[RMDB]
RNA sequence: GGGAACGACUCGAGUAGAGUCGAAAAGCGAUCGCUGGGCUCAACUCACCGCCGAUCAUGCGGACCAACUCGGUGGCUACCGCAUCGGCGAGCUCACCGCGGCGUUGCGAGCGCUCGGGGUCAGCGCACGCCGUUCGAUUUUCGAAUCGAACGGCGUAAAAGAAACAACAACAACAAC
Reactivity to DMS in 0.01 (KOAc 150mM, MgCl2 10mM, bicine 150mM(pH8.5), 24C), signal-to-noise 2, nucleotides 027 to 126: g000c030g030a040u030c050g020c040u000g020g000g030c020u000c050a110a080c070u000c130a140c100c070g030c020c000g010a090u020c190a090u000g000c000g000g000a130c000c000a050a120c100u000c200g000g010u000g000g000c070u030a070c040c030g000c010a070u000c010g000g010c000g010a050g010c010u000c060a060c170c090g030c030g000g000c010g040u010u010g000c080g000a110g010c040g010c000u000c080g030g010g010g000u010c100a020g000c010g000c150
Reactivity to 2A3 in 0.01 (KOAc 150mM, MgCl2 10mM, bicine 150mM(pH8.5), 24C), signal-to-noise 2, nucleotides 027 to 126: g050c050g100a180u140c050g000c090u040g020g000g000c010u040c070a060a070c080u000c080a060c080c020g000c000c000g010a030u090c080a040u190g000c000g030g050a120c010c000a050a100c070u090c240g280g070u040g000g000c070u200a220c010c000g000c000a000u000c000g020g010c000g010a010g000c000u000c000a060c070c000g030c030g010g000c020g080u060u100g100c080g070a100g030c010g010c000u000c030g070g050g000g050u090c040a010g040c060g000c030